[RMDB]
Chemical mapping of a 177-nucleotide RNA with 2A3 and DMS. The 2A3 profile rests on 37,101 reads. For DMS the reverse transcriptase was MarathonRT. Source: RMDB library RFMREP, as collected in RNAgym. The RNA was probed in 150 mM KOAc, 10 mM MgCl2 and 150 mM bicine (pH 8.5) at 24 C.
RNA sequence: GGGAACGACUCGAGUAGAGUCGAAAAGAGAGGCUAUAAGCGGGAUGAUGAAUCCGACCAUGAUGGUGUUGCAGAAAUUUAUGUAUGAUGUAGUUAUUGUCCAGGGAUCGAAACACCAUCAUGGUCAGGAUACAUCAGUGUUCGCACUGAUGUAUCCAAAAGAAACAACAACAACAAC
Reactivity to 2A3 in 0.01 (KOAc 150mM, MgCl2 10mM, bicine 150mM(pH8.5), 24C), signal-to-noise 9, nucleotides 027 to 126: g060a000g010a010g040g000c060u090a040u030a300a040g040c050g010g020g020a020u060g010a010u070g040a050a070u040c060c050g000a000c000c000a000u000g000a000u000g000g020u010g010u000u030g020c080a040g090a070a120a050u120u170u080a110u090g050u010a030u050g030a010u030g030u090a080g070u150u200a040u050u050g020u000c020c010a020g060g000g030a030u030c020g020a030a000a000c000a000c000c000a000u000c000a000u000g000g000u000c000a000
Reactivity to DMS in 0.01 (KOAc 150mM, MgCl2 10mM, bicine 150mM(pH8.5), 24C), signal-to-noise 9, nucleotides 027 to 126: g010a110g010a090g010g010c070u000a080u010a080a100g020c090g010g010g010a050u000g010a110u010g010a130a070u010c070c060g010a010c000c000a020u000g000a010u000g000g020u000g010u000u000g010c150a180g010a060a060a070u000u000u000a050u020g010u000a040u000g010a040u000g010u000a150g010u000u020a030u000u000g010u000c020c020a050g000g000g000a110u000c050g010a100a020a010c000a010c000c000a010u000c000a000u000g000g010u000c010a020